RNA sequence: GGGAACGACUCGAGUAGAGUCGAAAAUUCAGCAAGGUGACCCGGGACGGCGAGACGCUGCGCCCCAACACGCUCCUGCUAAAGGAACUGGAACGCACGUUUAGCGGGAAGCGCCUCCUGGAGGUGAGAUGUCUAUCGGCUUCGGCCGAUAGACAUCAAAAGAAACAACAACAACAAC
Reactivity to 2A3 in 0.01 (KOAc 150mM, MgCl2 10mM, bicine 150mM(pH8.5), 24C), signal-to-noise 1, nucleotides 027 to 126: u070u020c020a020g000c030a000a060g140g030u090g020a050c000c000c000g000g060g000a060c060g070g080c040g000a070g000a020c020g030c060u000g000c000g000c030c010c010c010a060a050c060a010c020g060c030u020c000c000u000g000c020u020a010a010a010g040g010a040a040c140u100g070g000a130a000c110g030c090a040c070g060u010u010u010a010g010c080g000g000g000a000a080g060c000g060c020c000u020c030c060u210g040g050a080g020g030u200g030a020